[RMDB]
RNA sequence: GGGAACGACUCGAGUAGAGUCGAAAAUUCGUGGUCUGCUGUCAAUCACAGGAUACAAAUUGCACACUGGGCGGUACACCGCUCACAGUAUUGACUUAAGUCGGUGGUAGGUCUGUGUGGAGAUCGAAUGAUAUCACCGGUUCGCCGGUGAUAUCAUAAAAGAAACAACAACAACAAC
Reactivity to DMS in 0.01 (KOAc 150mM, MgCl2 10mM, bicine 150mM(pH8.5), 24C), signal-to-noise 3, nucleotides 027 to 126: u000u000c060g010u000g010g000u010c020u000g020c060u020g010u010c090a100a060u010c070a100c080a090g010g000a060u010a030c070a080a120a100u020u000g030c060a060c110a070c110u010g010g020g020c000g000g010u000a190c250a120c000c000g010c020u000c030a030c150a070g020u000a060u000u010g000a050c040u000u010a060a100g020u000c090g010g000u000g000g000u000a100g000g010u000c040u010g010u020g020u000g000g000a070g000a040u020c120g000a110
Reactivity to 2A3 in 0.01 (KOAc 150mM, MgCl2 10mM, bicine 150mM(pH8.5), 24C), signal-to-noise 1, nucleotides 027 to 126: u090u060c020g000u070g020g010u030c000u050g080c020u040g070u080c040a080a080u080c040a070c020a050g000g040a010u020a130c030a010a170a060u120u080g040c030a000c020a030c080u060g000g000g000c000g000g020u110a090c040a060c000c000g050c000u000c020a040c020a020g000u010a030u150u090g090a010c000u090u190a110a050g040u070c000g090g010u080g020g020u060a020g030g110u000c000u030g000u000g020u030g010g060a000g010a050u050c030g040a050

Overview:
The record gives the reactivity of an RNA of 177 nucleotides to DMS and 2A3. The 2A3 profile rests on 1,087 reads. The reactions ran in a buffer of 150 mM KOAc, 10 mM MgCl2 and 150 mM bicine (pH 8.5), at 24 C. The DMS profile rests on 2,138 reads. For 2A3 the reverse transcriptase was SuperScript II with manganese.